RNA sequence: GGGAACGACUCGAGUAGAGUCGAAAAGGAGUUAGGCCUUGUCCUCUAGCCACAGAGGAAUGCUGAAGGUCCCAGGUGGCAGGUUACAAGGUCAGUGUGCUGCGGAAAGAUGACCUGACAGCUCUUUCUCAUUUCUUGAAAUAAAAAAGUCAAUUAAGCAUAGUAGUAGGUUCGCCUACUACUAUGCAAAAGAAACAACAACAACAAC
Reactivity to DMS in 0.01 (KOAc 150mM, MgCl2 10mM, bicine 150mM(pH8.5), 24C), signal-to-noise 1, nucleotides 027 to 156: g020g020a110g000u010u010a060g050g010c010c000u000u000g020u010c060c020u030c020u000a160g010c020c070a070c050a100g020a180g030g010a000a070u010g010c090u030g030a200a130g030g020u000c010c010c030a230g000g060u000g010g020c070a090g020g000u000u000a040c020a040a060g010g060u000c010a030g030u010g020u010g020c000u000g010c050g030g010a070a040a080g040a050u010g020a080c020c050u000g000a100c120a140g000c000u000c020u000u010u010c020u010c060a210u000u000u030c010u000u020g000a100a100a190u090a010a020a000a010a060a100g020u000c030a050a150u000u030a100a280
Reactivity to 2A3 in 0.01 (KOAc 150mM, MgCl2 10mM, bicine 150mM(pH8.5), 24C), signal-to-noise 3, nucleotides 027 to 156: g070g010a030g030u120u210a080g110g000c000c010u000u010g000u000c000c000u020c030u050a050g000c010c000a010c000a020g100a110g050g000a060a030u120g050c210u300g110a170a090g150g030u020c000c000c010a010g080g050u010g000g000c000a000g000g000u070u050a010c020a000a010g000g000u040c040a040g050u080g010u010g030c030u050g010c080g000g100a060a090a010g120a060u120g070a060c020c020u050g050a110c010a020g010c000u000c000u000u060u000c000u000c030a100u140u130u040c020u050u170g060a060a110a070u190a070a070a060a010a010a040g140u190c050a050a110u260u180a110a000
This 207-nucleotide RNA was probed chemically with DMS and 2A3. The RNA was probed in 150 mM KOAc, 10 mM MgCl2 and 150 mM bicine (pH 8.5) at 24 C. For 2A3, 1,464 sequencing reads were counted. The data come from the RNA Mapping Database (RMDB), library OK3TST.